[RMDB]
RNA sequence: GGGAACGACUCGAGUAGAGUCGAAAAGAAUUUAAAAUAUGGGAACACAUAGACUGAAUUUCUUUCUAGUCUAUAAAAAGAGAGAGAAGGAAAGAGAAUAUAUUGAGAGAAAACAUAAAAUGCUUCUGACUGACCUCUAGUAGGGCAGAGGUAGACACAUACGUCGUCAUUUCGAUGACGACGUAUGAAAAGAAACAACAACAACAAC
Reactivity to 2A3 in 0.01 (KOAc 150mM, MgCl2 10mM, bicine 150mM(pH8.5), 24C), signal-to-noise 2, nucleotides 027 to 156: g010a060a050u090u190u220a090a130a070a110u150a060u110g000g030g040a090a030c000a000c000a150u010a010g000a010c010u010g030a090a090u100u180u070c070u050u160u000c060u110a010g010u000c020u020a040u080a040a050a000a020a000g000a000g000a000g000a000g010a010a010g030g000a090a050a000g090a020g010a130a010u140a000u040a040u100u100g000a010g040a010g010a100a100a070a000c040a010u240a180a130a040a030u030g000c020u010u060c020u040g130a160c030u090g090a080c010c010u030c020u030a010g060u110a030g070g000g050c020a000g010a000g010g010u010a000g020a010c050a010